[RMDB]
Chemical mapping of a 177-nucleotide RNA with 2A3 and DMS. The data come from the RNA Mapping Database (RMDB), library OK1LIB.
RNA sequence: GGGAACGACUCGAGUAGAGUCGAAAAGAAAGAAACAGUUGGCUAGCAGAACGCACGAGGAUUAAAGCCAACCGUGCGAGUCGGAAUGCACGACCGACAAGAAAAGCCCUACAAUCGUGCAAGAAAAAUUACCGGAUACGUUCGCGUAUCCGGUAAUAAAAGAAACAACAACAACAAC
Reactivity to 2A3 in 0.01 (KOAc 150mM, MgCl2 10mM, bicine 150mM(pH8.5), 24C), signal-to-noise 4, nucleotides 027 to 126: g080a000a060a020g060a000a080a020c030a080g030u050u030g040g000c080u100a070g080c030a060g070a240a030c030g040c030a000c030g030a040g080g020a090u210u210a150a000a000g030c000c000a000a000c010c000g000u010g020c000g000a030g000u020c010g000g080a120a140u070g010c020a010c030g000a000c000c000g010a000c010a000a020g100a030a120a000a010g060c000c000c000u030a040c060a000a060u010c000g000u010g000c010a010a050g030a020a100a000a010
Reactivity to DMS in 0.01 (KOAc 150mM, MgCl2 10mM, bicine 150mM(pH8.5), 24C), signal-to-noise 3, nucleotides 027 to 126: g010a090a110a110g000a090a060a030c100a150g000u050u010g000g010c010u000a100g000c190a220g020a120a150c050g000c070a020c120g020a200g000g010a190u000u020a020a130a080g020c000c000a040a000c030c000g030u000g000c050g020a200g020u020c000g000g000a090a080u010g020c020a000c030g000a060c010c000g010a010c000a110a060g000a030a100a090a170g000c010c020c000u020a070c140a050a060u000c000g010u000g030c000a060a130g020a030a070a070a110